RNA sequence: GGGAACGACUCGAGUAGAGUCGAAAAUUACUCUUUGUUUGUAAAGAGGAGACUGCUGGACUCGCCGCCCAAGUUCGAGAGGGGCCAAAAUGCCGAACGAAGGGAACGCGGGGGAAGGAUCAUAUGAAAGCACAUCAGUUCGCUGAUGUGAAAAGAAACAACAACAACAAC
Reactivity to DMS in 0.01 (KOAc 150mM, MgCl2 10mM, bicine 150mM(pH8.5), 24C), signal-to-noise 7, nucleotides 027 to 129: u040u040a120c020u000c000u010u000u000g030u050u050u030g050u070a030a050a030g020a020g000g000a060g050a100c000u000g000c050u030g000g000a080c050u030c080g060c030c090g040c010c050c020a050a130g030u040u010c010g000a060g010a040g000g000g000g000c040c090a040a060a080a070u080g020c000c010g000a050a020c080g000a060a130g020g010g000a070a060c140g000c050g040g000g000g020g040a060a040g010g000a060u030c110a070u040a050u050g040a080a090a090g000
Reactivity to 2A3 in 0.01 (KOAc 150mM, MgCl2 10mM, bicine 150mM(pH8.5), 24C), signal-to-noise 9, nucleotides 027 to 129: u090u060a060c010u010c020u030u040u070g200u130u130u160g200u230a060a030a000g020a020g030g010a010g030a030c030u050g050c010u030g030g010a040c000u010c080g010c040c010g030c000c010c020a070a030g010u030u030c020g010a020g010a020g060g010g020g000c020c020a060a070a040a060u220g020c010c020g020a040a030c020g020a070a040g020g000g010a030a060c050g000c010g060g000g000g000g010a020a000g020g000a040u050c020a040u040a040u130g170a100a050a030g040